[RMDB]
RNA sequence: GGGAACGACUCGAGUAGAGUCGAAAAUCUGCCAGGCCGCACGGCGGACCUCCGUGAGCACCUUUACCUCCGCCCUGGGCUUGACGGCCGACACAUUUACCGUGAUUCCUCGCCGGUGCCCCACAGGGACUACACGUUCUUUCGAGAACGUGUAGUCAAAAGAAACAACAACAACAAC
Reactivity to DMS in 0.01 (KOAc 150mM, MgCl2 10mM, bicine 150mM(pH8.5), 24C), signal-to-noise 4, nucleotides 027 to 126: u010c030u000g010c010c010a090g000g010c050c030g030c060a070c220g000g010c020g000g020a050c110c050u000c040c070g000u000g000a080g010c090a080c070c040u010u000u010a110c130c050u000c040c040g000c010c010c060u000g010g000g010c020u000u000g010a070c080g020g000c070c030g010a120c110a040c090a120u000u010u000a070c070c060g010u010g000a190u000u010c020c020u000c040g000c050c040g000g010u000g010c020c020c010c050a110c160a070g010g000
Reactivity to 2A3 in 0.01 (KOAc 150mM, MgCl2 10mM, bicine 150mM(pH8.5), 24C), signal-to-noise 2, nucleotides 027 to 126: u010c000u040g040c000c020a050g020g000c020c020g090c110a040c010g030g020c000g020g050a080c020c010u030c020c030g100u090g070a040g040c060a100c030c010u070u130u200a110c000c020u010c010c000g030c000c000c000u030g000g040g010c000u010u050g060a020c030g000g030c050c010g070a010c050a010c010a130u070u110u140a070c050c000g010u000g060a100u070u000c020c000u010c040g030c030c020g020g050u030g020c010c000c040c020a060c030a030g190g010
The data come from the RNA Mapping Database (RMDB), library OK2TST. This 177-nucleotide RNA was probed chemically with DMS and 2A3. DMS adducts were read by reverse transcription with MarathonRT. The reactions ran in a buffer of 150 mM KOAc, 10 mM MgCl2 and 150 mM bicine (pH 8.5), at 24 C.